[RMDB]
RNA sequence: GGGAACGACUCGAGUAGAGUCGAAAAAUUCUGGACCCAGAGCUAUUCUUGGAUGUGCUCAAGCUAAACAAGCUAUCUCUUGUCUGAGCUCGGAUAUACGAAAUAAAAUAGACAAUGGAAUUCAUUUGAUGUAUCCAGAGAGGCCAAUCGUGAUUAGAAGAACUGAUUUAUUCGUAAAUCAGUUCUUAAAAGAAACAACAACAACAAC
Reactivity to 2A3 in 0.01 (KOAc 150mM, MgCl2 10mM, bicine 150mM(pH8.5), 24C), signal-to-noise 3, nucleotides 027 to 156: a000u080u060c060u070g020g030a030c020c000c030a030g000a020g020c020u030a040u140u000c020u060u100g060g000a030u060g050u090g050c020u010c060a020a030g040c080u100a090a030a080c030a030a020g010c010u070a050u060c090u000c000u050u080g030u040c030u070g090a020g010c010u000c000g010g000a010u050a020u020a130c040g040a000a060a000u150a030a080a020a020u090a040g060a030c060a020a020u060g040g020a070a050u140u060c020a040u040u070u210g070a070u060g020u050a040u000c010c010a000g000a000g020a030g020g040c030c010a000a040u110c080g070u040g070a070u090u200a050g050
Reactivity to DMS in 0.01 (KOAc 150mM, MgCl2 10mM, bicine 150mM(pH8.5), 24C), signal-to-noise 3, nucleotides 027 to 156: a170u010u000c030u010g010g000a120c030c020c010a190g000a140g020c020u000a070u000u000c030u000u010g030g010a120u000g010u010g010c020u000c020a080a080g020c030u000a050a060a080c060a050a050g020c100u000a120u000c080u010c030u000u010g010u000c030u010g020a040g030c000u000c010g010g030a070u000a050u000a070c020g010a060a060a090u000a060a070a070a100u000a100g010a130c060a040a130u010g030g010a130a120u000u000c070a080u000u000u010g020a100u000g010u000a020u000c010c020a080g000a070g010a100g020g000c040c040a030a110u000c040g010u000g010a210u000u000a160g000
About this RNA
Structure probing data (2A3 and DMS) for a 207-nucleotide construct. For DMS, 7,213 sequencing reads were counted. Source: RMDB library OK3TST, as collected in RNAgym. Conditions: 150 mM KOAc, 10 mM MgCl2 and 150 mM bicine (pH 8.5), 24 C.